[RMDB]
RNA sequence: GGGAACGACUCGAGUAGAGUCGAAAAGAUAUGGACGUGUUACAGCGAAGAACUCACAUCGGAAACGAUGUGAGGGGAGCUGGGCACGUCCUAAGUCAAAACAACUCUUGGUUCGCCAAGAGUUGAAUCACUAUGAGAACUUCGGUUCUCAUAGUGAAAAAGAAACAACAACAACAAC
Reactivity to DMS in 0.01 (KOAc 150mM, MgCl2 10mM, bicine 150mM(pH8.5), 24C), signal-to-noise 3, nucleotides 027 to 126: g000a000u000a020u020g000g000a030c000g010u000g010u000u000a090c010a000g030c000g000a050a180g020a020a300c000u000c010a000c000a000u000c000g000g000a000a000a010c000g010a000u000g010u000g000a010g000g000g020g010a000g010c000u000g000g010g010c000a000c000g010u000c000c000u000a000a040g000u000c000a150a060a120a230c010a010a010c000u000c000u000u010g010g010u000u010c270g010c010c000a010a010g000a010g000u000u000g000a080a100
Reactivity to 2A3 in 0.01 (KOAc 150mM, MgCl2 10mM, bicine 150mM(pH8.5), 24C), signal-to-noise 4, nucleotides 027 to 126: g010a000u020a010u030g000g000a000c020g010u020g100u080u300a300c100a000g010c010g190a300a010g020a020a010c000u000c000a010c010a000u000c000g000g000a010a000a000c010g010a000u000g000u000g000a000g000g000g000g030a020g000c000u000g000g010g000c020a000c000g000u010c000c000u000a000a000g000u000c000a010a030a020a100c010a010a000c000u000c000u000u020g100g020u070u120c300g050c120c010a000a000g010a000g000u010u010g000a000a010